[RMDB]
RNA sequence: GGGAACGACUCGAGUAGAGUCGAAAAUGCUCUUCUGUGGCAGCGUCAAACUUUUCCUGGUGUAAGAACCUGGACCUGGGAUACGUGCUUGAGUACAAAGUAAAGAAGGAGGCAGCAUCGCUGGCGGACCUUCCUCAGGGUUCGCCCUGAGGAAGGUAAAAGAAACAACAACAACAAC
Reactivity to 2A3 in 0.01 (KOAc 150mM, MgCl2 10mM, bicine 150mM(pH8.5), 24C), signal-to-noise 1, nucleotides 027 to 126: u040g000c020u000c020u090u070c000u090g100u090g060g000c050a030g050c000g010u070c070a060a110a130c040u000u050u060u100c020c020u050g060g000u030g000u020a080a110g020a120a040c010c000u010g020g020a030c020c020u020g030g020g000a050u010a080c020g020u080g040c050u080u060g010a020g020u010a070c070a050a120a030g090u150a060a040a050g040a000a020g080g030a030g010g000c050a000g000c010a020u030c050g000c080u040g030g060c030g020g010
Reactivity to DMS in 0.01 (KOAc 150mM, MgCl2 10mM, bicine 150mM(pH8.5), 24C), signal-to-noise 2, nucleotides 027 to 126: u000g010c020u000c040u010u000c050u010g030u010g030g010c030a050g020c090g040u010c070a050a120a120c070u000u000u000u000c000c010u000g020g010u000g000u000a120a170g010a120a070c030c010u000g010g020a080c130c050u010g000g000g010a250u000a050c050g010u000g000c020u000u000g010a130g020u010a080c110a070a070a090g020u000a070a080a060g010a170a110g000g010a090g000g000c040a040g020c030a030u000c090g010c030u000g010g010c070g010g010
The record gives the reactivity of an RNA of 177 nucleotides to 2A3 and DMS. Source: RMDB library OK2TST, as collected in RNAgym. The RNA was probed in 150 mM KOAc, 10 mM MgCl2 and 150 mM bicine (pH 8.5) at 24 C. The 2A3 profile rests on 1,270 reads.